The data come from the RNA Mapping Database (RMDB), library OK1LIB. Structure probing data (2A3) for a 177-nucleotide construct.

[RMDB]
RNA sequence: GGGAACGACUCGAGUAGAGUCGAAAACUAAUUUAUGAAAGAUUGCAGGUUGCCAUUGAAAAUGGGAGAUUGAUGGAUGUGAUAGACUCAUAUUUCCUGGAAUUUUCAUUCGCCUACAAAUUAGGUGCCGAAUGGUGAACUUCGGUUCACCAUUCGGAAAAGAAACAACAACAACAAC
Reactivity to 2A3 in 0.01 (KOAc 150mM, MgCl2 10mM, bicine 150mM(pH8.5), 24C), signal-to-noise 1, nucleotides 027 to 126: c210u260a100a160u000u210u180a040u000g010a030a000a080g120a000u000u060g160c000a000g040g000u110u140g110c000c000a000u070u180g160a060a020a020a020u160g000g180g000a040g210a300u020u280g000a000u040g030g060a090u120g030u040g000a070u130a000g300a030c000u000c000a000u040a030u030u110u220c000c000u000g000g010a000a070u010u010u010u000c000a000u000u090c000g000c010c090u130a090c120a000a000a130u170u030a010g170g000u030g120
The RNA was probed in 150 mM KOAc, 10 mM MgCl2 and 150 mM bicine (pH 8.5) at 24 C.